[RMDB]
The record gives the reactivity of an RNA of 177 nucleotides to DMS and 2A3. Source: RMDB library OK2TST, as collected in RNAgym. For 2A3 the reverse transcriptase was SuperScript II with manganese. As a SHAPE reagent, 2A3 marks flexible, mostly unpaired nucleotides at the ribose 2'-OH. The reactions ran in a buffer of 150 mM KOAc, 10 mM MgCl2 and 150 mM bicine (pH 8.5), at 24 C. Reactivities are given for positions 27 through 126.
RNA sequence: GGGAACGACUCGAGUAGAGUCGAAAAUCGCGCGGUGAACUUCGGUCCGCUACCAUUUAUCGCGAUCGAGUGCAUGACACGGCCGGUUGCGUACAGUCCGGCGUUGAGGCUGGACAGCGCGGCGGUAGCCUACGCUGCCUUUCGAGGCAGCGUAGGCAAAAGAAACAACAACAACAAC
Reactivity to DMS in 0.01 (KOAc 150mM, MgCl2 10mM, bicine 150mM(pH8.5), 24C), signal-to-noise 1, nucleotides 027 to 126: u000c050g000c030g000c080g010g030u000g010a080a030c060u000u010c080g000g030u000c030c130g020c100u000a190c100c070a120u000u020u020a100u030c020g010c050g060a070u010c060g000a100g010u000g040c070a060u020g010a110c130a130c060g010g000c030c040g000g000u010u020g000c000g000u000a090c280a080g000u000c000c000g000g010c030g030u000u020g020a210g000g000c010u020g010g000a060c000a110g030c010g020c050g000g000c030g020g020u020a060
Reactivity to 2A3 in 0.01 (KOAc 150mM, MgCl2 10mM, bicine 150mM(pH8.5), 24C), signal-to-noise 1, nucleotides 027 to 126: u010c010g020c000g000c010g120g010u020g020a080a020c040u150u130c120g000g040u090c050c070g030c020u020a030c000c010a060u080u090u100a160u120c030g000c020g000a020u070c000g020a060g040u080g100c050a120u210g000a070c020a020c070g070g000c020c010g000g010u170u070g000c020g010u000a070c040a050g000u040c000c020g000g030c040g080u080u130g090a090g300g000c050u040g020g010a010c000a000g020c020g010c000g000g090c010g000g000u020a020